[RMDB]
RNA sequence: GGGAACGACUCGAGUAGAGUCGAAAAGAUAUGGAUUGUGAUACGCGAUAAGCUUUACGUCGGAAACGACGUGAGCUUUUGACGCGUAGAGCAAUCCUAAGUCAAAAGAGGACGUUCGCGUCCUCAAGUCUCUCCCUAACUUCGGUUAGGGAGAGACAAAAGAAACAACAACAACAAC
Reactivity to DMS in 0.01 (KOAc 150mM, MgCl2 10mM, bicine 150mM(pH8.5), 24C), signal-to-noise 2, nucleotides 027 to 126: g000a050u000a300u010g000g010a000u000u010g000u000g010a300u000a000c000g010c000g030a170u000a010a010g030c000u020u010u010a000c000g010u020c010g000g000a130a080a160c000g020a000c000g000u000g000a000g000c000u000u000u000u000g030a170c110g030c000g000u010a010g010a300g000c000a020a000u000c000c000u010a020a110g020u010c040a110a090a120a220g000a030g000g000a030c000g030u010u010c300g010c000g010u000c000c000u000c000a020a090
Reactivity to 2A3 in 0.01 (KOAc 150mM, MgCl2 10mM, bicine 150mM(pH8.5), 24C), signal-to-noise 2, nucleotides 027 to 126: g020a020u060a040u110g000g000a000u010u030g020u040g040a010u020a020c010g050c060g030a060u040a190a020g000c000u070u080u300a020c000g010u020c010g040g000a060a110a090c000g000a000c000g010u000g000a000g010c030u070u020u000u060g130a110c120g000c020g000u010a000g000a000g010c000a000a020u000c000c000u010a050a020g050u000c020a000a000a030a290g000a000g000g000a010c000g030u060u100c280g060c010g190u050c000c000u000c000a000a000
Description
This 177-nucleotide RNA was probed chemically with DMS and 2A3. DMS adducts were read by reverse transcription with MarathonRT. DMS (dimethyl sulfate) methylates the pairing face of unpaired adenines and cytosines. For 2A3 the reverse transcriptase was SuperScript II with manganese. For DMS, 1,385 sequencing reads were counted.